[RMDB]
RNA sequence: GGGAACGACUCGAGUAGAGUCGAAAAGAUAUGGAAGAUUACCAGGGAGCUCCAUGGUCGGAAACGACCAUGUGAGCUUUGAUCUGGACGAUCUUCCUAAGUCAAAACGGUGUCUUCGGACACCGAAGGGAAUAUGUAACUUCGGUUACAUAUUCCCAAAAGAAACAACAACAACAAC
Reactivity to 2A3 in 0.01 (KOAc 150mM, MgCl2 10mM, bicine 150mM(pH8.5), 24C), signal-to-noise 1, nucleotides 027 to 126: g000a010u060a010u100g010g000a000a010g000a040u030u050a150c000c010a010g000g000g000a020g000c020u030c000c010a010u010g000g000u000c000g030g000a050a000a020c000g010a010c000c070a000u000g010u070g010a000g010c000u010u000u000g000a000u010c000u000g020g070a140c150g020a040u000c020u000u000c000c000u010a030a010g040u020c010a030a010a090a140c010g000g000u010g000u000c000u050u070c300g130g010a000c000a000c000c000g000a020a030
Reactivity to DMS in 0.01 (KOAc 150mM, MgCl2 10mM, bicine 150mM(pH8.5), 24C), signal-to-noise 2, nucleotides 027 to 126: g000a030u000a300u000g000g000a020a000g010a040u000u010a140c010c000a000g000g000g000a010g000c000u000c000c000a010u000g010g010u000c000g010g000a060a070a130c000g000a010c000c000a000u000g000u020g030a010g020c010u000u010u000g020a060u020c010u000g000g020a120c270g010a050u000c010u010u000c000c000u000a010a070g000u010c010a080a080a140a220c000g000g020u000g010u000c000u000u000c260g010g010a010c000a010c010c000g010a030a040
The data come from the RNA Mapping Database (RMDB), library TTRDES. Structure probing data (2A3 and DMS) for a 177-nucleotide construct. For DMS the reverse transcriptase was MarathonRT. The DMS profile rests on 2,468 reads.